[RMDB]
RNA sequence: GGGAACGACUCGAGUAGAGUCGAAAAAAGGCCAGAGUGGUCGUUCGUGGCUGAGCCGGUGCGGGACCGAAUCCUCGCCGCCGUCUGCGACGUGUUGUAUAUCGACGAGGCGGAUCUCAUUGAUGGCAACCGCAACGUAUUUCGAUACGUUGCGGUUAAAAGAAACAACAACAACAAC
Reactivity to DMS in 0.01 (KOAc 150mM, MgCl2 10mM, bicine 150mM(pH8.5), 24C), signal-to-noise 2, nucleotides 027 to 126: a030a150g000g000c020c020a120g000a080g030u030g030g000u000c030g010u050u030c050g000u000g000g000c050u030g000a090g000c100c010g040g000u000g080c150g060g000g030a080c110c100g000a130a270u010c000c020u010c060g000c030c090g040c060c020g000u030c020u010g010c050g000a080c080g000u020g040u010u010g010u000a130u050a130u000c030g000a140c080g010a070g080g020c100g010g000a030u000c030u000c030a140u010u000g000a060u010g000g000c170
Reactivity to 2A3 in 0.01 (KOAc 150mM, MgCl2 10mM, bicine 150mM(pH8.5), 24C), signal-to-noise 1, nucleotides 027 to 126: a010a000g140g020c040c010a010g000a020g170u090g000g020u020c020g020u000u040c070g000u020g090g000c000u020g020a000g060c040c060g030g000u000g030c000g020g010g030a000c000c040g040a050a070u110c000c010u010c040g110c020c000g040c030c000g030u000c010u050g090c040g050a040c040g020u000g020u000u050g060u000a150u000a030u220c010g000a030c000g020a060g000g050c110g080g000a010u000c000u000c020a110u060u250g040a110u070g120g040c040
The record gives the reactivity of an RNA of 177 nucleotides to DMS and 2A3. For DMS the reverse transcriptase was MarathonRT.